[RMDB]
Source: RMDB library M2PK50, as collected in RNAgym. The record gives the reactivity of an RNA of 177 nucleotides to DMS and 2A3. The 2A3 profile rests on 1,145 reads. DMS (dimethyl sulfate) methylates the pairing face of unpaired adenines and cytosines. For 2A3 the reverse transcriptase was SuperScript II with manganese. 2A3 is a SHAPE reagent: it acylates the 2'-hydroxyl of flexible nucleotides of all four kinds. The RNA was probed in 150 mM KOAc, 10 mM MgCl2 and 150 mM bicine (pH 8.5) at 24 C. DMS adducts were read by reverse transcription with MarathonRT.

RNA sequence: GGGAACGACUCGAGUAGAGUCGAAAAUCGGAUAUGUUCGCAUAUCCGAAAAUAAACUUGACACGGGGUCAAGAAAAACGCGAAAAAUAAAAGAACAAACAAAAACGAAGAUCUUCGGAUCUUCGAAUCAUAUAUAGAUCUUCGGAUCUAUAUAUGAAAAAGAAACAACAACAACAAC
Reactivity to DMS in 0.01 (KOAc 150mM, MgCl2 10mM, bicine 150mM(pH8.5), 24C), signal-to-noise 1, nucleotides 027 to 126: u000c000g000g000a040u000a030u010g000u000u030c140g010c000a080u000a010u000c000c000g010a020a000a060a090u010a090a090a140c010u000u010g000a060c000a220c200g010g000g000g010u000c010a020a030g010a070a050a080a140a060c170g000c110g000a040a050a110a180a030u010a030a100a100a080g030a090a060c080a050a060a080c120a060a030a070a090a190c030g000a030a010g000a000u000c000u000u000c210g020g000a000u000c000u000u010c000g000a090a070
Reactivity to 2A3 in 0.01 (KOAc 150mM, MgCl2 10mM, bicine 150mM(pH8.5), 24C), signal-to-noise 1, nucleotides 027 to 126: u020c000g000g000a000u000a000u000g010u020u040c140g030c130a000u000a010u000c000c000g010a000a000a000a000u000a000a000a000c020u010u030g010a000c000a080c270g300g060g000g000u000c000a020a000g020a120a060a000a020a000c120g020c080g110a240a040a050a010a020u200a110a120a030a030g080a150a010c030a060a060a020c020a020a170a060a000a000c010g000a000a000g000a000u010c020u070u150c190g070g000a010u000c000u000u020c000g010a010a020